Source information
Chemical mapping of a 177-nucleotide RNA with DMS. For DMS, 560 sequencing reads were counted. The data come from the RNA Mapping Database (RMDB), library TTRDES. The reactions ran in a buffer of 150 mM KOAc, 10 mM MgCl2 and 150 mM bicine (pH 8.5), at 24 C.

RNA sequence: GGGAACGACUCGAGUAGAGUCGAAAAGAUAUGGAUAUAGCCGACAUCGUUGAAAUAGGGUCGGAAACGACCCUAUGGAGAUGAAUCGGAACUACUAUAUCCUAAGUCAAACACUAGUUCGCUAGUGGUACGAUAGGGUCUUCGGACCCUAUCGUACAAAAGAAACAACAACAACAAC
Reactivity to DMS in 0.01 (KOAc 150mM, MgCl2 10mM, bicine 150mM(pH8.5), 24C), signal-to-noise 1, nucleotides 027 to 126: g010a050u000a230u000g010g000a000u000a000u000a000g040c000c000g000a040c050a100u000c000g030u000u000g000a300a140a040u000a010g020g000g000u000c000g000g000a030a230a190c000g000a010c000c000c000u000a000u000g010g000a300g030a000u000g010a080a300u000c010g000g000a070a010c100u000a300c040u000a000u000a000u000c000c000u000a100a100g000u000c010a160a140a250c010a030c000u010a030g000u000u030c300g040c010u000a040g010u030g020